[RMDB]
RNA sequence: GGGAACGACUCGAGUAGAGUCGAAAACAAGUACACCCACCCGGUUCCCGAGGGUGAGGUGACGCGCGUCGACAUCACCGUCACCGGCGGCAACACCAACACCGAGCUGUGGGUCAUCUGCCGCCAGCAGUACGAGGGUCUGCUGUGAGCGUCCGCGAACGCGCCUAAUUUUCGAAUUAGGCGCGUUAAAAGAAACAACAACAACAAC
Reactivity to DMS in 0.01 (KOAc 150mM, MgCl2 10mM, bicine 150mM(pH8.5), 24C), signal-to-noise 2, nucleotides 027 to 156: c050a070a210g010u000a140c040a070c000c000c000a030c010c010c010g020g000u000u010c020c030c000g050a230g020g000g040u000g010a120g000g070u000g010a060c000g020c080g020c060g000u000c050g010a140c020a030u000c020a080c040c040g000u000c030a040c020c020g000g020c000g030g000c020a070a100c070a050c000c020a060a090c010a020c000c010g010a300g020c040u010g080u000g010g010g010u010c050a100u000c080u000g000c060c010g030c010c000a000g020c010a090g030u010a070c010g000a300g010g020g030u000c040u000g000c020u020g010u000g000a110g010c000g020u010c000c010g010c200g000
Reactivity to 2A3 in 0.01 (KOAc 150mM, MgCl2 10mM, bicine 150mM(pH8.5), 24C), signal-to-noise 2, nucleotides 027 to 156: c030a110a010g140u100a080c000a000c000c020c000a010c010c000c010g000g080u040u030c000c010c020g050a040g010g050g000u000g020a100g020g020u010g000a000c000g040c000g030c030g010u080c040g050a080c010a170u020c010a020c010c040g100u120c090a030c080c010g000g010c000g010g000c010a040a040c020a030c030c000a030a100c010a030c030c130g200a040g030c130u030g020u020g020g000g020u000c030a090u000c030u020g000c000c010g000c000c000a010g000c000a000g000u140a030c080g070a170g000g100g070u020c020u040g000c000u030g010u040g020a050g030c050g020u060c030c000g000c000g000